[RMDB]
RNA sequence: GGGAACGACUCGAGUAGAGUCGAAAAAGGGACAGCUGAUAGAAACAGAAGCCACUGGAGCACCUCAAAAACACCAUCAUACACUAAAUCAGUAAGUUGGCAGCAUCACCUACCUCAAUGUGUAUCAUACUGAUGCAGAUUUCGAUCUGCAUCAGUAAAAAGAAACAACAACAACAAC
Reactivity to DMS in 0.01 (KOAc 150mM, MgCl2 10mM, bicine 150mM(pH8.5), 24C), signal-to-noise 3, nucleotides 027 to 126: a050g000g010g010a050c060a040g020c050u010g010a110u010a130g000a110a110a100c050a100g010a170a100g020c050c030a030c080u000g000g010a110g000c080a060c040c010u020c070a040a030a050a050a060c060a060c040c030a030u000c050a040u010a080c050a050c040u010a100a060a080u000c120a050g010u000a060a040g020u000u000g010g010c010a030g000c020a030u010c050a040c040c030u000a080c060c030u000c090a040a040u000g010u030g000u000a070u010c090a130
Reactivity to 2A3 in 0.01 (KOAc 150mM, MgCl2 10mM, bicine 150mM(pH8.5), 24C), signal-to-noise 1, nucleotides 027 to 126: a000g040g010g000a000c030a000g000c030u040g040a070u030a200g150a050a080a000c050a010g050a040a010g040c020c010a060c050u050g080g000a010g030c000a010c020c040u010c040a050a050a040a000a000c050a030c060c010a000u060c000a030u080a080c050a000c070u130a080a040a060u100c020a040g050u090a110a020g030u080u050g030g030c020a000g010c000a010u050c000a000c000c000u030a020c030c000u050c040a030a060u230g030u030g060u140a040u110c030a040
The record gives the reactivity of an RNA of 177 nucleotides to DMS and 2A3. DMS adducts were read by reverse transcription with MarathonRT. DMS (dimethyl sulfate) methylates the pairing face of unpaired adenines and cytosines.